[RMDB]
Chemical mapping of a 207-nucleotide RNA with 2A3 and DMS. 2A3 adducts were read by reverse transcription with SuperScript II with manganese. For 2A3, 3,137 sequencing reads were counted. For DMS, 3,035 sequencing reads were counted. For DMS the reverse transcriptase was MarathonRT.

RNA sequence: GGGAACGACUCGAGUAGAGUCGAAAAGGUCAGGCCUGAUCGGAAACAGCAGCAGGUGAGUCCGCCUUAUGUGAAGGAUCGGCUGAAACACGAGGAAAUACUGAGCCAACGCAAGACGGUAGCCGAAAAAAUCUAGUUCACUUCGGUGAACUAGAAAGAUAGGUAACCACUUCGGUGGUUACCUAUCAAAAGAAACAACAACAACAAC
Reactivity to 2A3 in 0.01 (KOAc 150mM, MgCl2 10mM, bicine 150mM(pH8.5), 24C), signal-to-noise 3, nucleotides 027 to 156: g050g000u060c030a030g030g050c000c030u130g030a090u060c030g040g060a120a100a040c030a030g050c020a010g020c000a010g040g010u060g030a060g070u060c070c050g030c020c030u100u090a140u130g090u040g060a090a050g050g000a050u060c020g020g000c020u010g000a050a080a000c080a030c100g020a060g000g080a040a140a000u130a090c040u060g000a010g010c020c010a050a030c050g000c030a050a010g050a020c060g000g030u050a020g010c010c000g000a100a000a000a000a000a010u010c000u000a000g000u000u000c000a000c000u020u050c160g070g000u000g000a000a000c000u000a000g000a000a000a000
Reactivity to DMS in 0.01 (KOAc 150mM, MgCl2 10mM, bicine 150mM(pH8.5), 24C), signal-to-noise 2, nucleotides 027 to 156: g030g020u000c030a090g020g030c020c020u000g030a090u000c070g000g000a130a050a080c060a190g030c070a020g010c020a160g010g030u000g020a090g000u000c020c000g000c000c020u010u020a070u000g030u000g020a080a160g030g010a080u000c020g050g010c000u000g000a090a100a100c080a180c060g020a080g030g010a100a050a110u000a120c020u040g020a140g020c010c040a040a080c080g010c020a050a070g020a100c040g000g020u000a040g020c030c010g050a020a020a070a060a120a140u000c010u000a020g010u000u000c000a000c000u010u000c280g060g000u000g000a000a000c000u000a000g000a010a010a080